RNA sequence: GGGAACGACUCGAGUAGAGUCGAAAAGAUAUGGACACUGUAGUCUCGUGUGGGUCUUGUAAUUCUGCUUAUCGGAAACGAUAAGGCAGGAUACAGGGCCCACACGGUGCCUACAGUGUCCUAAGUCGUUCAGUAGAAGGUUCGCCUUCUACUGAACAAAAGAAACAACAACAACAAC
Reactivity to DMS in 0.01 (KOAc 150mM, MgCl2 10mM, bicine 150mM(pH8.5), 24C), signal-to-noise 3, nucleotides 027 to 126: g010a110u020a300u010g010g000a020c000a010c000u010g000u010a010g000u000c010u000c000g030u000g010u000g000g010g020u000c000u000u000g000u010a080a140u000u000c000u000g010c010u000u000a020u000c000g020g000a160a120a270c000g010a000u010a020a070g030g020c000a000g010g010a010u000a020c000a000g010g000g000c000c000c000a000c010a000c010g000g010u000g000c060c000u000a000c000a000g010u000g010u000c000c010u000a020a090g010u000c110

Source information:
The record gives the reactivity of an RNA of 177 nucleotides to DMS. It was measured as part of the RMDB library TTRINS. The reactions ran in a buffer of 150 mM KOAc, 10 mM MgCl2 and 150 mM bicine (pH 8.5), at 24 C. Values are in units of 0.01, from 0 to 300, in steps of 10.